This 207-nucleotide RNA was probed chemically with 2A3 and DMS. The RNA was probed in 150 mM KOAc, 10 mM MgCl2 and 150 mM bicine (pH 8.5) at 24 C. For DMS the reverse transcriptase was MarathonRT. The DMS profile rests on 10,052 reads.
RNA sequence: GGGAACGACUCGAGUAGAGUCGAAAAGCGGGGCUUGAAACGCGGGUAGCGCGCAAGCCCGGCGAAGAAGUUCGCAUACGCGGUGUGCUGGUGCCGAAGUGUCUGCUGCAACGGCACGCUCGACACCUAGAACAUACCGUAUUCGUACGGUAUGUAAGGUUAUUAGGAGAUUCGUCUCCUAAUAACCAAAAGAAACAACAACAACAAC
Reactivity to 2A3 in 0.01 (KOAc 150mM, MgCl2 10mM, bicine 150mM(pH8.5), 24C), signal-to-noise 6, nucleotides 027 to 156: g030c050g000g010g000g000c010u010u020g050a100a170a060c060g010c070g000g080g120u250a110g140c010g000c010g000c000a000a000g010c000c000c000g000g000c010g010a030a020g070a040a010g100u110u110c060g000c050a020u080a180c090g020c060g130g030u020g010u010g060c040u050g020g000u000g000c000c010g030a070a040g030u030g040u100c090u130g060c070u090g010c040a050a000c010g000g000c000a000c020g020c040u020c020g020a010c010a020c020c010u030a040g040a080a000c000a000u010a010c000c000g010u010a020u020u050c110g060u020a000c010g000g000u000a000u000g010u020a030a070
Reactivity to DMS in 0.01 (KOAc 150mM, MgCl2 10mM, bicine 150mM(pH8.5), 24C), signal-to-noise 3, nucleotides 027 to 156: g010c010g010g010g090g040c000u000u010g010a090a090a050c010g020c010g000g060g030u000a190g030c030g010c030g020c020a050a030g010c000c000c000g000g030c010g010a050a300g000a080a180g000u000u000c040g010c050a100u010a050c050g000c080g000g020u010g010u000g030c030u010g010g010u000g020c000c020g000a050a160g020u010g000u000c070u030g000c100u010g020c130a120a190c070g000g000c000a020c010g000c040u000c000g020a060c010a040c010c000u000a150g010a160a100c010a010u000a000c000c000g010u000a030u010u000c290g000u000a030c040g010g030u000a010u000g010u000a050a110